[RMDB]
RNA sequence: GGGAACGACUCGAGUAGAGUCGAAAAGCACUGGAAUGGCAAUUCUACAACAGCAUGCAUUUAGCUACAUACUGAAUUCUGGCCAUAGACUCUUUGCAGUCUUAGCACCUAAGGCACAGCUAGGUGGACGUAUGUGAAAGUUCGCUUUCACAUACGUAAAAGAAACAACAACAACAAC
Reactivity to 2A3 in 0.01 (KOAc 150mM, MgCl2 10mM, bicine 150mM(pH8.5), 24C), signal-to-noise 7, nucleotides 027 to 126: g020c010a010c100u050g040g070a070a040u050g050g000c020a010a060u070u010c030u090a090c020a160a020c010a040g040c020a020u100g010c030a050u120u110u090a050g010c030u050a020c030a090u140a090c030u040g050a070a070u100u040c050u110g080g010c020c010a020u030a040g020a020c010u040c030u100u160u260g040c090a020g010u000c000u020u050a040g010c010a010c030c010u040a060a050g060g000c050a020c010a130g050c020u030a030g040g000u000g030g060
Reactivity to DMS in 0.01 (KOAc 150mM, MgCl2 10mM, bicine 150mM(pH8.5), 24C), signal-to-noise 7, nucleotides 027 to 126: g010c050a040c070u010g010g000a070a040u000g010g010c060a070a100u010u000c040u000a060c090a080a120c040a040g010c050a030u000g010c040a050u010u000u010a090g010c030u010a040c070a030u000a050c030u000g000a060a070u000u000c060u010g010g010c040c040a070u000a040g010a040c010u000c010u000u010u010g020c110a030g000u000c010u000u010a090g010c020a050c030c020u000a040a070g000g010c060a070c170a070g010c090u000a030g010g020u000g010g000
Chemical mapping of a 177-nucleotide RNA with 2A3 and DMS. Values are in units of 0.01, from 0 to 300, in steps of 10. For 2A3, 11,265 sequencing reads were counted. The RNA was probed in 150 mM KOAc, 10 mM MgCl2 and 150 mM bicine (pH 8.5) at 24 C.